Structure probing data (2A3 and DMS) for a 207-nucleotide construct.

RNA sequence: GGGAACGACUCGAGUAGAGUCGAAAAUAGCUGCAACACAUUUGCCCACAAGAGGGCAAUGUAAGAGAAGUCAUGGCCAAAUUCUCACUCGAAUUAGGAAUUGCUUAUUAGACCGAAAGAGAUUGUACCUUUCUUAUAUAAAUUGGUCAACAAGACCUCUCUCAAAUUAUUUCGAUAAUUUGAGAGAAAAAGAAACAACAACAACAAC
Reactivity to 2A3 in 0.01 (KOAc 150mM, MgCl2 10mM, bicine 150mM(pH8.5), 24C), signal-to-noise 2, nucleotides 027 to 156: u080a000g010c070u040g060c020a100a000c000a020c030a130u120u070u230g030c000c040c010a080c110a070a130g100a240g060g000g000c010a010a010u010g000u020a070a020g010a000g020a100a010g090u150c070a100u160g100g000c050c010a020a030a030u050u020c020u030c030a060c030u030c080g030a070a050u130u030a100g000g000a090a050u090u040g000c000u020u050a010u060u020a100g040a000c000c000g020a010a010a000g010a020g070a180u060u050g010u060a050c000c000u050u160u060c080u100u160a220u020a030u040a180a170a140u120u090g000g010u020c040a040a060c040a220a080g000a010c000c000
Reactivity to DMS in 0.01 (KOAc 150mM, MgCl2 10mM, bicine 150mM(pH8.5), 24C), signal-to-noise 1, nucleotides 027 to 156: u000a110g100c000u000g020c020a090a120c110a020c010a030u000u000u000g020c000c010c010a050c060a120a300g000a300g020g030g000c000a000a010u000g020u000a090a120g000a090g020a090a020g000u000c060a050u000g000g030c000c000a050a080a170u010u000c020u000c030a130c130u000c060g010a060a060u000u000a060g000g000a070a090u010u000g000c020u020u000a110u000u000a120g020a020c030c050g000a060a100a100g000a040g000a300u000u000g000u000a060c030c010u010u000u010c020u010u030a100u000a140u000a020a040a130u000u010g000g010u000c030a090a070c010a060a150g020a050c030c000